[RMDB]
Conditions: 150 mM KOAc, 10 mM MgCl2 and 150 mM bicine (pH 8.5), 24 C. Chemical mapping of a 177-nucleotide RNA with 2A3 and DMS.

RNA sequence: GGGAACGACUCGAGUAGAGUCGAAAAAAGCACUAGAGGAACUUGUUACAGAAAUAUGUCUUAACUGGUUCAUGUCCAUGUUUUCUUUUUACAAGAAGCAUAGGCAGCAUUGGAGUAUCCAGGGAGGACAUCGACAUGGAUUCGUCCAUGUCGAUGUAAAAGAAACAACAACAACAAC
Reactivity to 2A3 in 0.01 (KOAc 150mM, MgCl2 10mM, bicine 150mM(pH8.5), 24C), signal-to-noise 2, nucleotides 027 to 126: a020a000g030c070a030c060u060a030g020a060g190g050a040a010c000u030u080g070u080u120a030c040a050g170a060a100a060u300a170u240g040u020c010u030u020a030a020c000u010g010g000u030u030c010a010u020g000u000c000c000a020u000g060u100u130u090u040c020u060u070u070u070u110a070c080a050a000g040a000a000g000c000a030u040a020g000g050c020a020g020c010a060u040u150g110g050a060g030u090a050u050c010c000a010g000g000g000a040g030g000
Reactivity to DMS in 0.01 (KOAc 150mM, MgCl2 10mM, bicine 150mM(pH8.5), 24C), signal-to-noise 3, nucleotides 027 to 126: a060a060g010c070a080c060u000a090g000a130g000g020a040a060c060u000u010g010u000u000a070c130a080g000a050a100a140u010a090u000g020u010c010u010u000a080a090c000u010g000g000u000u000c030a100u010g000u000c010c030a020u000g000u000u010u000u000c010u010u000u010u010u010a090c270a020a010g000a030a020g000c010a000u000a040g010g000c010a030g000c160a190u010u010g010g010a130g010u000a060u000c020c010a040g000g000g010a070g010g000